[RMDB]
RNA sequence: GGGAACGACUCGAGUAGAGUCGAAAAGCUCGGAGACGAGCAAGGCUGACAAAACGCUGUCCCAACCUCCACGUGGUGUCGGCUGGAUAAUGCUGCAUUAUGUUGCAUUUAUCAACUGGGAACGAAAAGGAGUGCGUAGCUUCGGCUACGCACUCCUAAAAGAAACAACAACAACAAC
Reactivity to 2A3 in 0.01 (KOAc 150mM, MgCl2 10mM, bicine 150mM(pH8.5), 24C), signal-to-noise 1, nucleotides 027 to 126: g000c000u020c030g000g020a040g000a030c000g000a010g010c030a000a030g030g020c030u020g000a000c000a000a070a050a040c060g020c100u040g040u040c000c000c000a000a030c020c010u050c050c090a110c040g160u160g020g000u010g010u000c020g000g090c020u050g000g000a000u030a060a000u020g000c020u050g000c020a030u000u110a160u300g000u070u030g000c010a000u000u000u160a000u000c090a000a020c000u010g060g000g010a040a070c000g110a010a180a000